[RMDB]
RNA sequence: GGGAACGACUCGAGUAGAGUCGAAAAACAUAUGCUACGGCAUAUGAAAAGUAGUUUCAUGAUAAAGGGUGUAUGAGAGAUCAACCCUUUAUCAUGAAACGCUUGAACGCCAGCUACGGCUGGCGAAUGAACAUACGUGGUUCGCCACGUAUGUUCAAAAAGAAACAACAACAACAAC
Reactivity to 2A3 in 0.01 (KOAc 150mM, MgCl2 10mM, bicine 150mM(pH8.5), 24C), signal-to-noise 5, nucleotides 027 to 126: a000c010a000u010a000u000g000c010u010a020c200g110g000c000a000u020a000u010g040a050a100a000a000g060u300a020g010u010u000u000c000a000u000g010a010u000a000a010a010g030g020g000u050g070u110a170u170g090a090g020a030g020a120u090c030a070a100c000c000c000u000u000u000a010u000c000a000u000g000a000a000a000c000g000c000u000u040g060a070a000c020g000c010c000a000g000c000u020a050c260g090g000c010u000g010g000c000g000a020a050
Reactivity to DMS in 0.01 (KOAc 150mM, MgCl2 10mM, bicine 150mM(pH8.5), 24C), signal-to-noise 2, nucleotides 027 to 126: a170c000a010u000a000u000g000c000u000a150c220g020g000c000a010u010a000u030g000a060a050a020a020g020u000a070g020u010u000u010c000a020u000g000a010u000a000a010a010g000g000g010u010g010u060a100u030g050a050g000a240g000a170u010c010a080a040c010c000c000u000u040u000a000u000c000a000u000g000a000a000a000c000g010c020u000u000g010a130a180c030g000c000c020a000g010c000u000a090c170g010g000c020u020g000g010c000g020a000a040